[RMDB]
RNA sequence: GGGAACGACUCGAGUAGAGUCGAAAAAGGCACCGCUACGGCGGUGGCAAGUAGAAAAGUUGGUGCUUAGACCACGCCCUCUACCGUAAUAAUAGAUAAAUAGGCGAGUAUCAGUACGCUGAUACAAAAAACACUCACACGUUCGCGUGUGAGUGAACCCUAGGGUUCACUUCGGUGAACCCUAGGGAAAAGAAACAACAACAACAAC
Reactivity to 2A3 in 0.01 (KOAc 150mM, MgCl2 10mM, bicine 150mM(pH8.5), 24C), signal-to-noise 1, nucleotides 027 to 156: a000g070g000c000a000c000c000g000c000u000a000c180g060g000c000g000g050u000g020g050c020a100a000g050u030a000g060a000a070a000a020g080u170u060g020g000u070g000c110u160u060a080g040a130c000c000a000c000g030c000c020c000u000c000u020a020c050c020g110u020a070a040u020a160a020u090a170g070a080u120a170a210a120u100a120g040g060c060g010a060g000u000a010u000c000a000g020u030a000c180g050c130u000g000a000u000a040c000a000a160a000a000a000a000c000a000c000u010c000a000c000a000c000g090u080u020c120g000c000g230u000g000u050g000a000g000u000g000a000a000